[RMDB]
RNA sequence: GGGAACGACUCGAGUAGAGUCGAAAAGUGUGUGAUCGUGAUCGAUCGUUCGAACACGUUCGUGUGAUCACACGUUCGAACGAACGAGAUCUCGAGAGAGAGAUCGAUCUCGUGAACUCGUUCGAGUUCGUACUCUCUCUCUCGUACACUCGUGUACACCGAUCCGAGGAUUCGUCCUCGGAUCGGUAAAAGAAACAACAACAACAAC
Reactivity to 2A3 in 0.01 (KOAc 150mM, MgCl2 10mM, bicine 150mM(pH8.5), 24C), signal-to-noise 1, nucleotides 027 to 156: g140u150g000u000g010u030g050a020u130c100g060u100g050a150u150c100g040a010u010c000g000u050u080c070g070a070a050c040a030c050g000u020u070c010g010u040g040u060g150a130u090c010a000c000a000c000g000u030u090c030g040a090a080c010g000a020a000c000g000a000g030a030u030c030u070c030g010a000g000a000g000a000g000a010g000a010u270c000g000a020u020c000u000c000g000u040g190a150a190c090u050c300g190u170u010c000g000a000g000u000u010c030g030u160a240c000u000c010u020c000u000c000u000c000u000c000g000u010a060c040a030c080u000c010g170u030g030u110a050c130
Conditions: 150 mM KOAc, 10 mM MgCl2 and 150 mM bicine (pH 8.5), 24 C. This 207-nucleotide RNA was probed chemically with 2A3. The 2A3 profile rests on 472 reads. Values are in units of 0.01, from 0 to 300, in steps of 10. It was measured as part of the RMDB library OK3TST. Values cover nucleotides 27 to 156.